[RMDB]
RNA sequence: GGGAACGACUCGAGUAGAGUCGAAAACUUCAAUUUCCUCACUAAGUGAAAUGAAAAGACAAAUUCAGCCUAGGGUAGUCGUCCAAACAGGGAUAGGCGACCCAUCCCCUUAUGUGAGUGAUCAGGGCUACACCCGUCAAUUCGUUGACGGGUGUAGAAAAGAAACAACAACAACAAC
Reactivity to 2A3 in 0.01 (KOAc 150mM, MgCl2 10mM, bicine 150mM(pH8.5), 24C), signal-to-noise 2, nucleotides 027 to 126: c000u160u080c040a100a270u110u050u100c000c000u000c040a040c020u000a000a020g080u030g200a060a090a120u040g020a000a010a050a040g170a040c050a020a110a040u030u050c030a030g020c000c070u070a040g010g020g000u000a010g000u000c020g010u060c010c000a180a130a220c060a170g160g000g020a030u080a300g050g000c000g000a010c000c000c000a000u020c010c040c000c010u060u000a040u180g000u000g030a000g040u060g020a020u110c030a070g100g000g050
Reactivity to DMS in 0.01 (KOAc 150mM, MgCl2 10mM, bicine 150mM(pH8.5), 24C), signal-to-noise 2, nucleotides 027 to 126: c050u020u000c080a100a070u010u000u010c160c020u000c020a040c020u000a080a010g000u010g000a060a040a100u000g000a050a010a100a070g000a070c150a030a040a130u000u000c030a020g010c050c040u000a150g010g000g000u000a000g080u010c020g020u040c000c040a090a100a180c300a140g010g000g000a010u000a020g020g030c000g000a020c000c000c020a140u010c020c000c010c020u000u000a000u010g010u000g010a060g020u000g020a010u000c130a090g030g000g010
Chemical mapping of a 177-nucleotide RNA with 2A3 and DMS. Source: RMDB library OK2TRN, as collected in RNAgym. The RNA was probed in 150 mM KOAc, 10 mM MgCl2 and 150 mM bicine (pH 8.5) at 24 C.